Structure probing data (2A3 and DMS) for a 177-nucleotide construct. As a SHAPE reagent, 2A3 marks flexible, mostly unpaired nucleotides at the ribose 2'-OH. 2A3 adducts were read by reverse transcription with SuperScript II with manganese. For DMS the reverse transcriptase was MarathonRT. For DMS, 1,191 sequencing reads were counted.
[RMDB]
RNA sequence: GGGAACGACUCGAGUAGAGUCGAAAAUUACCAGUAAAUCAUGGUGAACGUGUCGUCAUGCGGUUGCUAGACAAACAUAGCCUCAAAUUAGAUUUAGAGUCUUUGGGGAUGUCGCAAAAAAACUGCCCAUAGGUUCAGACUUCGGUCUGAACCUAUGAAAAGAAACAACAACAACAAC
Reactivity to 2A3 in 0.01 (KOAc 150mM, MgCl2 10mM, bicine 150mM(pH8.5), 24C), signal-to-noise 2, nucleotides 027 to 126: u030u030a060c020c010a020g060u130a070a140a020u160c030a070u050g000g020u030g020a120a040c100g120u080g060u050c040g030u000c010a060u070g030c020g050g050u050u000g000c040u080a060g030a040c040a000a100a010c060a080u160a030g090c000c000u030c000a100a110a020u130u080a030g030a060u020u150u050a100g010a020g140u000c120u010u060u020g050g010g020g000a030u020g020u000c030g010c050a040a000a070a140a050a000a000c030u050g070c010c000
Reactivity to DMS in 0.01 (KOAc 150mM, MgCl2 10mM, bicine 150mM(pH8.5), 24C), signal-to-noise 2, nucleotides 027 to 126: u010u010a120c030c010a110g010u000a040a130a130u010c100a090u000g030g040u000g000a040a100c080g000u000g010u000c040g000u000c010a090u000g010c040g010g010u000u000g000c050u000a090g020a040c070a060a100a080c100a090u000a190g010c020c000u000c000a040a040a090u000u010a060g000a150u000u000u010a110g000a100g030u010c020u000u000u000g020g000g000g000a080u000g030u010c050g030c060a030a000a080a060a030a110a050c070u000g010c180c080